Overview: Structure probing data (2A3) for a 207-nucleotide construct. The 2A3 profile rests on 520 reads. The reactions ran in a buffer of 150 mM KOAc, 10 mM MgCl2 and 150 mM bicine (pH 8.5), at 24 C. Source: RMDB library ARCHII, as collected in RNAgym.

RNA sequence: GGGAACGACUCGAGUAGAGUCGAAAAACACUAAAUAAUCUCCGUCUGGGGUUAGUUAGAAGAGCUUAAUCAGACUAGCUGAAUGGAAGCCUGUUACCGGGCUGAUGUUUAUGCGAAAUGCUAAUACGGUGACUACGCUCGUAGAUAUUUAAGUGCCGCCUAAUCCAAUGUUCGCAUUGGAUUAGGCAAAAGAAACAACAACAACAAC
Reactivity to 2A3 in 0.01 (KOAc 150mM, MgCl2 10mM, bicine 150mM(pH8.5), 24C), signal-to-noise 1, nucleotides 027 to 156: a010c000a000c000u000a000a000a120u000a000a070u030c000u030c040c150g020u000c000u020g000g000g020g020u030u000a030g020u040u060a030g010a250a020g040a070g060c140u200u300a020a030u100c000a000g000a020c000u010a000g000c010u010g020a000a000u020g030g010a000a000g010c000c000u050g060u060u060a020c000c000g020g010g030c000u010g000a010u070g030u000u010u000a140u300g000c000g000a050a050a030u200g000c190u190a000a000u000a030c020g000g000u000g000a000c000u030a050c030g030c050u090c150g040u030a010g030a090u030a210u100u140u040a160a110g050u050g090c080c040